The record gives the reactivity of an RNA of 177 nucleotides to DMS and 2A3. Values are in units of 0.01, from 0 to 300, in steps of 10. For 2A3, 1,265 sequencing reads were counted. As a SHAPE reagent, 2A3 marks flexible, mostly unpaired nucleotides at the ribose 2'-OH. In probing experiments dimethyl sulfate is read out at A N1 and C N3, which are open when not base-paired. Conditions: 150 mM KOAc, 10 mM MgCl2 and 150 mM bicine (pH 8.5), 24 C.
[RMDB]
RNA sequence: GGGAACGACUCGAGUAGAGUCGAAAAUGAAACUGGAUGACGUUUUCAUUCUUUAUUUCUCUUUUAUCAUAAUUGUGCAGGUAAAUUAUUUGUGUAGUAAAAGGGUGCUACAGAAUACGGUUAUUGAGUCAUUAAUGACGUUCGCGUCAUUAAUGACAAAAGAAACAACAACAACAAC
Reactivity to DMS in 0.01 (KOAc 150mM, MgCl2 10mM, bicine 150mM(pH8.5), 24C), signal-to-noise 2, nucleotides 027 to 126: u000g000a040a020a050c040u000g020g010a080u010g010a110c200g010u000u010u000u010c010a010u000u000c070u020u010u010a070u030u000u000c020u000c010u010u020u000u000a070u000c020a040u000a080a110u010u020g010u010g020c110a070g000g010u010a060a050a080u000u000a030u000u000u000g020u010g030u010a040g030u010a020a090a070a110g020g010g010u000g000c030u000a040c020a090g000a030a020u000a060c150g010g000u000u000a090u000u010g020a280
Reactivity to 2A3 in 0.01 (KOAc 150mM, MgCl2 10mM, bicine 150mM(pH8.5), 24C), signal-to-noise 2, nucleotides 027 to 126: u060g010a040a010a010c020u040g030g120a100u080g080a050c050g030u020u040u190u110c000a000u020u030c000u020u240u090a210u050u100u010c010u010c000u000u120u050u190a130u040c020a040u040a230a060u150u140g080u080g040c070a070g090g040u080a110a200a090u090u090a120u030u080u190g090u000g000u040a030g030u020a080a080a080a040g080g010g000u050g000c000u000a000c000a000g060a040a000u050a030c070g090g080u090u030a070u090u070g020a040